[RMDB]
RNA sequence: GGGAACGACUCGAGUAGAGUCGAAAAGUCACUCAAUUCGUUGAGUGACAUACUGGGGCCGGAGUCGCGCAUGAAAGGGUCAAGACGCGCUCGAUAAAAUAACUAGUUGCCAGUUCGCUGGCAACAACUUAUAUUUUGAAUUCGUUCAAAAUAUAAGAAAAGAAACAACAACAACAAC
Reactivity to 2A3 in 0.01 (KOAc 150mM, MgCl2 10mM, bicine 150mM(pH8.5), 24C), signal-to-noise 3, nucleotides 027 to 126: g000u010c000a000c000u010c010a020a030u110u040c160g060u130u010g000a000g000u000g000a010c000a000u040a000c010u050g000g000g000g020c050c040g090g000a030g040u160c010g000c010g000c040a050u110g070a120a110a040g100g010g020u070c040a010a020g050a070c020g010c000g020c030u010c020g040a090u150a140a160a020a020u120a040a030c060u050a050g010u010u000g000c000c000a010g000u030u040c210g020c050u000g000g000c000a000a000c000a000a000
Reactivity to DMS in 0.01 (KOAc 150mM, MgCl2 10mM, bicine 150mM(pH8.5), 24C), signal-to-noise 3, nucleotides 027 to 126: g000u010c000a010c010u000c000a010a050u010u010c200g020u000u000g000a010g010u000g010a000c000a020u000a040c060u010g010g000g000g010c150c060g010g000a070g020u000c030g020c060g000c030a110u010g010a040a090a130g010g020g020u000c060a110a090g000a110c030g020c050g010c030u000c030g000a090u010a030a050a100a080u000a060a080c150u000a130g010u000u000g010c000c000a000g010u000u020c200g020c000u000g010g000c000a000a000c010a040a100

Overview: Chemical mapping of a 177-nucleotide RNA with 2A3 and DMS. Values are in units of 0.01, from 0 to 300, in steps of 10. The DMS profile rests on 3,592 reads. DMS adducts were read by reverse transcription with MarathonRT. It was measured as part of the RMDB library M2PK50.